[RMDB]
RNA sequence: GGGAACGACUCGAGUAGAGUCGAAAAGAAAGAAAGAAAGCGGUUGGGUGGGUCCAUCGACCGUCGUGGCGUAUUCGGACGCUUUACCACGACGCGAGGAAAUAUCGAGACCGACCACCCCCUUUAACAGAGGUAUAGUAGUUCGCUACUAUACCAACCUAUCCGAGUAGUUCGCUACUCGGAUAGGAAAAGAAACAACAACAACAAC
Reactivity to 2A3 in 0.01 (KOAc 150mM, MgCl2 10mM, bicine 150mM(pH8.5), 24C), signal-to-noise 2, nucleotides 027 to 156: g040a000a040a020g030a020a130a020g050a050a070a020g140c130g060g090u190u110g100g050g020u060g050g030g000u120c170c020a070u030c000g030a050c040c010g000u000c000g010u000g000g000c070g000u080a140u110u210c140g150g040a030c040g040c020u110u080u100a070c020c000a000c000g020a010c010g020c110g010a020g000g100a050a250a010u180a020u000c000g000a010g020a060c000c040g060a040c000c010a000c020c000c000c000c030u000u130u030a130a030c080a020g070a040g200g000u000a000u000a000g000u000a000g010u000u030c190g020c140u000a000c000u000a000u000a000c000c000a000a000
Reactivity to DMS in 0.01 (KOAc 150mM, MgCl2 10mM, bicine 150mM(pH8.5), 24C), signal-to-noise 1, nucleotides 027 to 156: g000a120a070a070g000a180a100a120g000a170a150a120g010c120g000g070u000u000g010g000g020u020g010g020g020u000c020c020a210u000c000g020a050c120c020g010u000c000g020u000g000g000c060g000u000a040u000u010c070g000g000a110c080g000c150u000u000u010a030c000c010a030c040g010a040c000g020c040g020a130g010g000a060a070a070u000a050u000c120g000a120g000a110c050c000g030a040c050c010a060c000c000c000c020c020u000u000u000a050a160c160a040g020a170g010g010u000a010u000a020g020u000a010g010u020u010c300g030c010u000a000c020u000a030u000a000c010c020a070a060